The record gives the reactivity of an RNA of 177 nucleotides to 2A3 and DMS. The reactions ran in a buffer of 150 mM KOAc, 10 mM MgCl2 and 150 mM bicine (pH 8.5), at 24 C. Reactivities are given for positions 27 through 126. The DMS profile rests on 1,318 reads. For 2A3 the reverse transcriptase was SuperScript II with manganese.
RNA sequence: GGGAACGACUCGAGUAGAGUCGAAAAGCUCUGGGGGUUCAUCUCGACAGGAACUUCCCAGGGGAAGUGUUCCAGCAUCUUCUGUCGAGGCGUCUUCGUGCCUCCGUACGUCUUGAUAAUCCAAGAGUCGACCUAAGUGAUUCGUCACUUAGGUCGAAAAAGAAACAACAACAACAAC
Reactivity to 2A3 in 0.01 (KOAc 150mM, MgCl2 10mM, bicine 150mM(pH8.5), 24C), signal-to-noise 1, nucleotides 027 to 126: g080c010u010c010u010g010g000g020g010g010u030u000c000a080u070c040u000c040g030a000c010a020g030g000a000a000c000u300u230c040c000c020a010g000g010g020g000a070a070g080u100g050u100u030c020c000a000g110c020a090u070c050u160u010c000u050g030u000c000g000a000g010g000c000g000u000c050u210u040c050g110u050g090c010c040u030c000c030g080u050a050c020g030u000c010u030u010g020a050u050a220a070u030c050c000a030a000g050a030g150
Reactivity to DMS in 0.01 (KOAc 150mM, MgCl2 10mM, bicine 150mM(pH8.5), 24C), signal-to-noise 1, nucleotides 027 to 126: g020c020u020c010u000g000g020g000g020g000u000u010c030a140u010c020u000c040g000a010c040a050g000g000a010a020c000u000u010c020c020c040a040g000g020g020g030a090a020g020u000g000u010u000c000c020a110g000c170a090u010c120u020u010c050u000g030u010c010g000a010g000g030c120g000u000c120u000u020c090g010u000g000c040c000u000c030c040g000u010a060c080g010u000c000u000u000g000a130u020a170a150u010c120c020a060a110g000a130g020